[RMDB]
RNA sequence: GGGAACGACUCGAGUAGAGUCGAAAACUCAAUCUGGUUGGAGAAAGUCAAUUGCGUUGGCUACCACCUACGGUAUCCCAACACCAGCCUUUUCCACCGCUUUGUCUUUCUACGAUGGGUACAGAUCAAUACUCGGUGGAUUCGUCCACCGAGUAUUAAAAGAAACAACAACAACAAC
Reactivity to DMS in 0.01 (KOAc 150mM, MgCl2 10mM, bicine 150mM(pH8.5), 24C), signal-to-noise 3, nucleotides 027 to 126: c020u000c020a080a110u030c060u030g000g020u030u020g000g000a050g030a040a020a000g000u030c030a040a050u020u000g000c100g010u000u000g000g040c300u010a090c070c040a070c170c140u040a110c210g030g000u010a040u020c100c000c000a070a060c060a100c070c120a080g000c070c010u010u010u000u000c000c000a020c100c030g000c070u010u000u000g020u000c000u000u000u000c000u020a040c080g000a070u030g010g010g000u070a070c040a020g000a040u030c130
Reactivity to 2A3 in 0.01 (KOAc 150mM, MgCl2 10mM, bicine 150mM(pH8.5), 24C), signal-to-noise 4, nucleotides 027 to 126: c000u030c010a040a060u060c030u090g050g040u060u070g050g010a040g050a040a030a010g040u040c050a110a150u140u090g020c050g010u020u010g000g010c000u030a060c000c030a070c020c060u030a070c050g010g000u040a060u050c020c010c000a000a020c010a020c030c040a010g000c020c000u020u080u040u030c020c010a060c020c010g000c030u070u040u020g030u000c010u000u070u000c020u040a080c060g050a080u070g030g000g110u080a030c040a050g050a060u070c050
Chemical mapping of a 177-nucleotide RNA with DMS and 2A3.
For 2A3 the reverse transcriptase was SuperScript II with manganese.
Conditions: 150 mM KOAc, 10 mM MgCl2 and 150 mM bicine (pH 8.5), 24 C.
It was measured as part of the RMDB library OK1LIB.
For DMS, 3,593 sequencing reads were counted.
For 2A3, 3,001 sequencing reads were counted.